Annotation:
Chemical mapping of a 177-nucleotide RNA with DMS and 2A3.

RNA sequence: GGGAACGACUCGAGUAGAGUCGAAAAAGGGCCACCCAGUGUGGGCUCAGGAAGAGAAGGAAUGUGACUGAGGCUGGGUGUGGCAGAGGAGAGCACAGCCAGUUGUGGGUUUUUCUUGGGGCCCAGACCAGAAUGCAUGAUUCGUCAUGCAUUCUGGAAAAGAAACAACAACAACAAC
Reactivity to DMS in 0.01 (KOAc 150mM, MgCl2 10mM, bicine 150mM(pH8.5), 24C), signal-to-noise 4, nucleotides 027 to 126: a050g000g010g000c020c020a130c020c000c020a100g000u010g010u030g020g000g020c000u000c020a040g000g010a090a070g010a090g010a110a110g010g010a080a080u030g040u030g010a130c020u010g010a130g010g030c010u000g000g010g020u010g020u000g000g020c060a080g010a080g000g010a080g020a120g020c020a010c050a040g000c020c020a030g000u000u010g010u010g000g000g000u000u000u010u000u000c010u010u000g010g020g000g010c010c010c020a080g000a150
Reactivity to 2A3 in 0.01 (KOAc 150mM, MgCl2 10mM, bicine 150mM(pH8.5), 24C), signal-to-noise 7, nucleotides 027 to 126: a010g030g000g000c020c010a060c020c010c020a030g020u060g020u070g110g070g000c010u000c010a010g090g040a070a060g040a020g040a150a060g110g080a130a100u170g050u120g090a030c030u050g020a020g040g000c010u000g010g040g030u040g010u020g070g000c050a020g020a040g170g070a070g000a000g030c000a010c000a030g090c020c010a010g000u030u020g050u130g020g040g010u030u010u010u050u000c020u010u050g030g000g020g000c000c000c000a000g010a020

Annotation: It was measured as part of the RMDB libraries RFM100 and RFMREP. Conditions: 150 mM KOAc, 10 mM MgCl2 and 150 mM bicine (pH 8.5), 24 C. For DMS the reverse transcriptase was MarathonRT. High DMS reactivity at an A or C suggests that its Watson-Crick edge is free.